[RMDB]
RNA sequence: GGGAACGACUCGAGUAGAGUCGAAAAGAUAUGGAUACACGGGAGGAACUACCAAAUCUAUCGGAAACGAUAGAACUUGGCCGAAGAACGUGUAUCCUAAGUCAAAAGUGUGGCUUCGGCCACACAACACACUAUUUAAGUUCGCUUAAAUAGUGUGAAAAGAAACAACAACAACAAC
Reactivity to DMS in 0.01 (KOAc 150mM, MgCl2 10mM, bicine 150mM(pH8.5), 24C), signal-to-noise 8, nucleotides 027 to 126: g010a030u000a180u010g000g000a020u000a000c010a010c000g010g010g010a150g010g010a120a100c190u020a230c020c000a000a010a050u000c000u000a000u000c000g010g010a050a050a070c000g010a010u000a000g000a010a030c170u000u000g000g000c070c140g010a080a090g010a220a170c000g010u000g000u000a000u000c000c000u000a010a050g010u000c020a070a060a090a110g010u000g020u000g000g000c000u000u010c200g010g000c000c000a000c000a000c010a090a180
Reactivity to 2A3 in 0.01 (KOAc 150mM, MgCl2 10mM, bicine 150mM(pH8.5), 24C), signal-to-noise 6, nucleotides 027 to 126: g010a010u040a010u080g010g000a000u000a000c000a000c010g030g030g040a050g060g040a200a280c200u190a090c230c000a000a000a020u000c000u000a010u000c000g000g010a030a020a000c000g000a000u000a000g000a020a070c090u020u010g000g020c050c140g230a190a020g010a030a010c000g000u000g000u000a000u000c000c000u000a010a010g020u000c020a010a010a140a190g010u000g010u010g000g010c020u060u120c300g080g000c010c000a000c000a000c000a000a010
Notes:
Conditions: 150 mM KOAc, 10 mM MgCl2 and 150 mM bicine (pH 8.5), 24 C. Structure probing data (DMS and 2A3) for a 177-nucleotide construct. DMS adducts were read by reverse transcription with MarathonRT. High DMS reactivity at an A or C suggests that its Watson-Crick edge is free. The 2A3 profile rests on 40,100 reads. Source: RMDB library TTRDEL, as collected in RNAgym.